[RMDB]
RNA sequence: GGGAACGACUCGAGUAGAGUCGAAAAGAUAUGGAAGGAGAGAGCCGAAGAACUACGUAACAUCUCGGAAACGAGUGGUAGGGAGGCUCCUCCUUCCUAAGUCAAAACGCGCAGUUCGCUGCGCGAACGAAGUUAAUCGGUUCGCCGAUUAACUUCGAAAAGAAACAACAACAACAAC
Reactivity to DMS in 0.01 (KOAc 150mM, MgCl2 10mM, bicine 150mM(pH8.5), 24C), signal-to-noise 3, nucleotides 027 to 126: g000a000u000a010u000g000g010a020a010g000g010a010g000a090g010a020g020c000c000g000a090a130g020a140a170c000u000a000c000g020u010a170a210c150a090u020c020u010c010g020g000a010a010a040c010g030a000g020u000g010g020u010a000g000g000g000a010g010g020c010u000c010c000u010c000c000u000u010c000c000u000a000a060g000u000c020a100a040a080a160c020g000c000g030c020a000g000u000u010c220g010c010u000g000c000g030c000g000a020a070
Reactivity to 2A3 in 0.01 (KOAc 150mM, MgCl2 10mM, bicine 150mM(pH8.5), 24C), signal-to-noise 1, nucleotides 027 to 126: g010a000u000a010u050g000g010a000a000g010g010a020g010a000g000a000g020c010c050g140a150a070g000a020a000c010u010a000c030g040u050a100a030c060a200u210c020u020c000g020g000a010a000a000c000g000a000g010u180g010g020u050a010g000g000g010a010g000g000c000u020c000c000u000c000c010u010u010c000c000u000a000a000g000u000c010a000a010a060a020c010g000c020g000c000a000g030u060u100c150g070c160u000g000c010g000c010g020a030a000